[RMDB]
RNA sequence: GGGAACGACUCGAGUAGAGUCGAAAACGAGGCGAUCGGGUCAACCAUGGUUAAGGAACUCGGCACAAUGGCCCCGUAACUUCGGGAGAAGGGGUGCCCCCGCGUACGUGAACCGGCUCGCCCGGGGCCACCGUCAAGAAUUCGUUCUUGACGGUGGAAAAGAAACAACAACAACAAC
Reactivity to 2A3 in 0.01 (KOAc 150mM, MgCl2 10mM, bicine 150mM(pH8.5), 24C), signal-to-noise 6, nucleotides 027 to 126: c020g010a060g010g030c010g010a040u040c040g040g010g030u060c050a050a060c020c010a100u120g150g020u170u160a110a090g070g010a040a030c040u010c040g020g000c040a020c030a100a110u150g090g020c000c000c000c000g020u040a040a080c050u080u080c100g070g010g010a060g040a040a050g020g010g010g010u060g010c000c000c000c020c010g030c020g040u080a090c040g020u030g030a040a030c010c000g010g000c020u030c010g020c000c000c000g010g000g040g010
Reactivity to DMS in 0.01 (KOAc 150mM, MgCl2 10mM, bicine 150mM(pH8.5), 24C), signal-to-noise 3, nucleotides 027 to 126: c060g000a150g000g020c030g020a060u030c050g010g010g000u010c070a180a050c070c040a070u020g000g000u000u030a110a120g000g000a170a070c060u000c070g000g040c200a040c070a060a070u010g020g000c040c010c020c020g030u010a110a180c050u000u000c030g000g030g040a150g010a100a070g000g000g030g000u010g000c010c020c090c020c040g000c070g020u060a070c140g010u000g010a060a170c060c020g010g010c110u020c050g000c010c010c020g000g000g010g020
Chemical mapping of a 177-nucleotide RNA with 2A3 and DMS. For 2A3, 5,976 sequencing reads were counted. For 2A3 the reverse transcriptase was SuperScript II with manganese. Reactivities are given for positions 27 through 126.